This 177-nucleotide RNA was probed chemically with DMS and 2A3. Reactivities are given for positions 27 through 126. The reactions ran in a buffer of 150 mM KOAc, 10 mM MgCl2 and 150 mM bicine (pH 8.5), at 24 C.

RNA sequence: GGGAACGACUCGAGUAGAGUCGAAAAGGGGAAAGAUGUGGCAGAGGUGUUGGGAUAUGCCGAAACUGCCAACAUAAGAAAACUUUUAGACGAGGCGGAUUACAAAGAAAUAGACCCACAAAAUGGCUUCUAAGUAAAGAUUCGUCUUUACUUAGAAAAAAGAAACAACAACAACAAC
Reactivity to DMS in 0.01 (KOAc 150mM, MgCl2 10mM, bicine 150mM(pH8.5), 24C), signal-to-noise 9, nucleotides 027 to 126: g000g010g010g010a110a090a050g010a030u010g020u010g000g010c010a020g020a130g000g010u010g010u010u010g010g030g000a130u030a040u010g010c020c020g000a070a090a130c030u000g010c000c000a040a060c050a040u020a060a080g010a090a090a110a140c060u000u010u010u020a120g010a090c070g010a090g000g010c050g000g000a090u010u020a090c120a050a060a090g000a050a060a080u020a080g000a120c040c010c020a080c230a060a050a060a090u030g000g010c150
Reactivity to 2A3 in 0.01 (KOAc 150mM, MgCl2 10mM, bicine 150mM(pH8.5), 24C), signal-to-noise 6, nucleotides 027 to 126: g010g010g010g020a050a080a050g080a030u060g010u030g020g000c020a000g020a060g030g050u070g060u070u080g060g030g020a080u110a030u180g010c000c000g050a100a080a020c020u010g010c010c010a070a040c010a110u090a040a050g080a060a050a000a030c020u060u060u060u120a030g010a040c020g010a030g010g030c030g000g010a010u040u040a050c080a070a110a010g040a030a070a010u060a030g050a070c000c050c000a030c050a030a100a030a050u090g060g010c040